[RMDB]
RNA sequence: GGGAACGACUCGAGUAGAGUCGAAAAUCCGACUCUCAUAGGCUCUCCAACCCAACUCCUACUCAAUACUUCCUCGUCGUACAGAACGGUAACAUGUUUUCCGAACAUCCGCGCUUGGGUAUACGAGAAAGGCGUAGAUUAUUCGUAAUCUACGCAAUGUCGAAACACAAUUCGUUGUGUUUCGACAAAAAGAAACAACAACAACAAC
Reactivity to 2A3 in 0.01 (KOAc 150mM, MgCl2 10mM, bicine 150mM(pH8.5), 24C), signal-to-noise 1, nucleotides 027 to 156: u030c000c000g020a030c010u000c000u000c060a110u110a070g090g000c050u040c010u000c020c000a060a050c020c000c010a020a070c040u070c000c000u050a140c030u060c030a090a060u080a110c040u040u060c010c040u030c020g100u050c030g000u020a010c000a070g090a090a060c030g000g080u080a080a010c010a100u110g060u020u010u070u020c060c030g030a030a010c010a060u000c030c010g110c000g010c150u010u020g060g090g000u090a040u030a060c070g000a040g020a100a050a000g150g000c000g000u000a000g000a020u000u000a010u060u000c090g020u010a000a000u000c000u000a010c000g040c000a010a000